[RMDB]
RNA sequence: GGGAACGACUCGAGUAGAGUCGAAAAACAGAGGUUGAUCCCGACCUAUCUGCUUUCUAUGUUAAGGAUGGUAAAUACUUUACAAGUGAACCACCCGUAACAUAUUCACCAGCUACAAUUUUAGCUGCAAACGAUACAUCUUCGGAUGUAUCGUUUGAAAAGAAACAACAACAACAAC
Reactivity to DMS in 0.01 (KOAc 150mM, MgCl2 10mM, bicine 150mM(pH8.5), 24C), signal-to-noise 3, nucleotides 027 to 126: a020c010a010g010a030g010g000u000u000g010a200u000c020c020c010g010a020c000c000u000a130u010c000u000g010c040u000u000u000c080u010a000u000g000u000u000a050a030g010g010a020u010g010g000u000a060a100a090u000a030c010u000u000u020a170c280a120a040g000u010g000a240a060c000c000a010c010c000c000g000u000a000a000c010a000u000a030u000u000c060a060c110c010a000g010c020u000a040c300a070a120u010u010u000u000a000g010c020u000g020
Reactivity to 2A3 in 0.01 (KOAc 150mM, MgCl2 10mM, bicine 150mM(pH8.5), 24C), signal-to-noise 3, nucleotides 027 to 126: a000c030a000g030a020g040g010u000u020g030a220u020c040c010c010g010a000c000c010u030a160u070c010u030g020c010u020u130u010c000u030a000u010g010u000u000a040a030g010g000a010u020g020g000u020a110a160a080u110a060c010u050u130u120a100c130a130a030g010u020g040a020a000c000c000a000c050c000c000g010u000a010a000c000a010u020a080u050u110c050a070c110c010a020g000c010u030a070c120a300a280u120u080u100u080a020g020c010u010g000